[RMDB]
RNA sequence: GGGAACGACUCGAGUAGAGUCGAAAAGAUAUGGACGUGAACUACCUGGAAAUCCGGUCGAAGAACUAGAUGUUCUCGGAAACGAGAACAUCUAGGGAGACCAGGGAGUACAGGCACGUCCUAAGUCGUUAACUAUUUUCUUCGGAAAAUAGUUAACAAAAGAAACAACAACAACAAC
Reactivity to 2A3 in 0.01 (KOAc 150mM, MgCl2 10mM, bicine 150mM(pH8.5), 24C), signal-to-noise 3, nucleotides 027 to 126: g070a020u130a100u210g020g000a000c010g010u020g030a130a140c110u130a110c300c000u010g020g000a070a030a030u040c040c060g020g030u000c050g210a300a200g070a210a120c010u010a000g020a010u000g000u000u020c000u000c010g010g060a100a050a030c020g000a010g000a000a010c010a000u010c000u000a000g010g000g010a040g000a000c010c010a090g010g000g020a020g000u030a010c010a000g020g000c000a000c000g000u040c000c000u020a000a010g010u000c030
Reactivity to DMS in 0.01 (KOAc 150mM, MgCl2 10mM, bicine 150mM(pH8.5), 24C), signal-to-noise 4, nucleotides 027 to 126: g010a070u000a210u020g000g010a020c000g010u010g000a060a060c090u020a300c010c000u000g000g000a200a220a220u020c000c040g020g030u000c000g030a160a160g010a110a180c000u000a000g000a010u000g000u000u000c010u000c010g010g000a050a060a130c000g010a010g010a020a010c000a000u000c000u010a000g000g000g010a160g000a030c000c000a050g010g010g020a050g000u000a140c010a010g000g000c020a010c010g000u010c000c010u000a020a080g020u000c080
An RNA of 177 nucleotides, treated with 2A3 and DMS and read out base by base. Reactivities are given for positions 27 through 126. It was measured as part of the RMDB library TTRINS. The 2A3 profile rests on 7,995 reads.